Structure probing data (2A3 and DMS) for a 207-nucleotide construct. The 2A3 profile rests on 1,419 reads. The RNA was probed in 150 mM KOAc, 10 mM MgCl2 and 150 mM bicine (pH 8.5) at 24 C. It was measured as part of the RMDB library OK3TST. 2A3 adducts were read by reverse transcription with SuperScript II with manganese.

[RMDB]
RNA sequence: GGGAACGACUCGAGUAGAGUCGAAAACACUUUGCCUUUUAGAAUGCACAUGGGCACUACCACACAGACCCUUGCCACAGAAAACCAAGCAAAAUGAAAUGCCAUUGUGCAUUUGAGGAAUUAUGUUUGUCAGGCUAGUGCUCUGUUUUAAUUAUUACGAGGGAUUAAUAUUCGUAUUAAUCCCUCGAAAAGAAACAACAACAACAAC
Reactivity to 2A3 in 0.01 (KOAc 150mM, MgCl2 10mM, bicine 150mM(pH8.5), 24C), signal-to-noise 3, nucleotides 027 to 156: c020a000c030u080u060u130g050c010c020u080u100u030u060a130g060a110a060u170g040c000a020c030a150u090g010g000g000c000a020c000u090a080c020c030a050c000a010c000a120g030a090c000c030c000u040u060g020c020c020a070c030a060g170a110a140a030a040c030c020a060a000g060c030a070a030a020a130u190g040a070a040a000u010g030c000c010a130u130u190g020u120g010c030a010u040u010u060g030a050g030g010a030a020u150u060a080u280g050u020u040u040g080u040c040a020g010g020c040u010a000g010u000g000c020u000c000u000g000u000u050u020u040a080a100u080u150a050u240u260a070
Reactivity to DMS in 0.01 (KOAc 150mM, MgCl2 10mM, bicine 150mM(pH8.5), 24C), signal-to-noise 3, nucleotides 027 to 156: c040a060c050u010u010u030g030c020c010u000u010u000u020a140g030a110a100u000g010c010a040c090a050u010g010g010g030c030a050c020u000a080c010c090a190c080a080c060a070g000a120c050c060c000u000u000g010c020c040a140c050a180g010a090a090a080a140c080c060a020a180g000c040a060a070a090a140u000g000a060a070a090u010g020c000c000a210u000u010g020u000g030c000a040u000u000u010g010a130g000g000a070a080u000u010a050u000g030u000u000u020g010u000c060a140g000g000c070u000a080g010u000g020c000u000c050u000g000u000u000u000u000a040a220u000u000a140u010u000a210